[RMDB]
RNA sequence: GGGAACGACUCGAGUAGAGUCGAAAAAAUGACUUAUGCGCUUUGUAUAAAAAACAGUGUUUUUAUGACCUAAUGUGCUUUGCACAUUUGGCGCAUAUGGUGCUUUGCACAUUUGGCACACUUGGAACAUGAUUAUUUCGUUCGCGAAAUAAUCAUGAAAAGAAACAACAACAACAAC
Reactivity to DMS in 0.01 (KOAc 150mM, MgCl2 10mM, bicine 150mM(pH8.5), 24C), signal-to-noise 5, nucleotides 027 to 126: a060a050u010g010a210c050u000u000a030u000g010c010g010c030u010u010u000g010u010a080u030a000a040a050a050a040a090c080a090g010u010g010u000u000u010u010u010a080u020g000a120c010c020u000a020a010u000g020u000g010c010u010u000u000g020c000a010c000a040u000u000u000g000g010c020g020c020a020u000a030u000g010g020u000g020c010u000u000u000g010c030a050c050a060u000u000u000g020g000c040a050c090a060c090u000u010g010g010a100a180
Reactivity to 2A3 in 0.01 (KOAc 150mM, MgCl2 10mM, bicine 150mM(pH8.5), 24C), signal-to-noise 4, nucleotides 027 to 126: a020a010u180g030a010c030u060u060a030u020g000c020g020c030u140u170u170g100u070a120u160a090a140a030a000a020a020c080a090g040u040g030u100u060u010u070u060a140u120g050a090c010c000u020a000a010u000g010u000g000c020u110u110u180g000c000a010c010a040u030u030u040g030g000c020g010c000a000u020a040u070g080g020u020g000c020u080u070u080g000c000a000c010a050u050u060u030g020g010c000a010c000a000c090u040u100g080g040a080a040